[RMDB]
RNA sequence: GGGAACGACUCGAGUAGAGUCGAAAAGCGGCUGGCAUGUCGUCCGGGCAUAAAGUCAUAUCGCCUGAACAGAGAACAUGUUACUGACUUUGAAACGCGAUUUUAUAAUUUGCUGUCCAAAAAUACGUGAUCGAAGUUAGUUCGCUAACUUCGAUCAAAAAGAAACAACAACAACAAC
Reactivity to 2A3 in 0.01 (KOAc 150mM, MgCl2 10mM, bicine 150mM(pH8.5), 24C), signal-to-noise 4, nucleotides 027 to 126: g030c010g060g000c100u040g030g000c020a030u040g010u030c010g030u010c020c030g000g020g000c000a030u050a060a220a020g090u130c030a050u080a050u130c090g000c000c010u030g000a060a010c050a030g120a010g040a180a020c000a010u030g020u020u040a040c010u030g130a140c000u000u060u110g090a080a100a000c060g000c000g010a010u000u090u010u090a210u090a060a100u010u030u190g000c000u030g070u010c010c000a070a020a010a010a040u150a060c100g050
Reactivity to DMS in 0.01 (KOAc 150mM, MgCl2 10mM, bicine 150mM(pH8.5), 24C), signal-to-noise 3, nucleotides 027 to 126: g020c020g010g000c120u020g000g010c050a030u010g000u000c070g000u010c020c000g000g000g010c000a030u000a070a140a080g010u050c260a070u000a030u010c170g020c020c050u030g010a090a070c010a210g010a150g000a130a030c030a000u060g020u000u010a030c080u000g000a060c010u010u020u010g020a040a090a050c130g000c000g020a020u000u010u010u030a120u030a060a050u000u000u020g030c000u030g010u030c030c020a000a040a080a070a040u050a130c220g000
An RNA of 177 nucleotides, treated with 2A3 and DMS and read out base by base. Values are in units of 0.01, from 0 to 300, in steps of 10. It was measured as part of the RMDB libraries RFM100 and RFMREP. The RNA was probed in 150 mM KOAc, 10 mM MgCl2 and 150 mM bicine (pH 8.5) at 24 C. For 2A3 the reverse transcriptase was SuperScript II with manganese.